[RMDB]
Notes:
This 177-nucleotide RNA was probed chemically with 2A3. The reactions ran in a buffer of 150 mM KOAc, 10 mM MgCl2 and 150 mM bicine (pH 8.5), at 24 C. 2A3 adducts were read by reverse transcription with SuperScript II with manganese.
RNA sequence: GGGAACGACUCGAGUAGAGUCGAAAAGCAUGCUGGGCAACCAUCGCCCGACAUCAGCGGCCUCGAUCACAGUGGUUCGUUCCAGCAGCAGGCGCAGCACGAUCUGUGCCUCCAGGCGUGCCAGUGCGUCCGCACGUCGAUUCGUCGACGUGCGGACAAAAGAAACAACAACAACAAC
Reactivity to 2A3 in 0.01 (KOAc 150mM, MgCl2 10mM, bicine 150mM(pH8.5), 24C), signal-to-noise 2, nucleotides 027 to 126: g060c160a140u010g000c000u040g000g000g000c010a010a020c010c030a140u080c110g040c050c010c000g000a020c000a160u300c110a030g080c060g050g000c030c040u120c060g100a190u120c040a010c000a040g050u070g070g000u000u050c100g030u270u030c000c000a010g000c050a020g000c000a040g040g000c060g000c040a080g000c000a000c240g010a180u010c000u020g000u050g040c010c000u050c000c000a010g030g040c020g020u030g000c000c110a130g000u000g080c020